RNA sequence: GGGAACGACUCGAGUAGAGUCGAAAAUCGGCUGCAUAGACGUUGCCGUGAGCAAGCCUGCGCCGCAACGCUUCCGGUGUGAUGUCGACCAGCUCGACCUGAUCGGCCGCGCGGACGAUCUCGUCGGGCCAGAUGCCAGAUUCGUCUGGCAUCUGGCAAAAGAAACAACAACAACAAC
Reactivity to 2A3 in 0.01 (KOAc 150mM, MgCl2 10mM, bicine 150mM(pH8.5), 24C), signal-to-noise 2, nucleotides 027 to 126: u060c010g020g000c020u030g010c030a050u040a180g050a050c010g030u020u030g000c000c010g010u040g070a020g000c020a080a060g060c010c080u170g060c070g060c090c020g000c020a070a040c100g000c040u090u000c010c040g050g010u050g080u100g010a080u080g010u050c010g030a040c020c010a030g000c000u000c010g000a000c000c030u000g000a020u000c000g010g010c030c030g120c080g050c240g070g000a000c000g000a010u010c000u020c000g020u020c000g000g030
Reactivity to DMS in 0.01 (KOAc 150mM, MgCl2 10mM, bicine 150mM(pH8.5), 24C), signal-to-noise 3, nucleotides 027 to 126: u010c030g010g040c010u010g010c040a040u010a160g010a030c030g020u000u000g020c020c090g020u010g000a080g030c050a080a260g020c100c070u000g000c030g020c050c070g000c080a040a040c130g010c100u000u000c110c060g020g010u000g000u000g000a040u000g020u000c030g000a140c190c060a120g010c020u000c010g000a010c010c010u000g000a010u010c000g010g000c020c010g010c300g060c170g000g010a030c000g010a010u010c000u010c130g000u000c010g000g000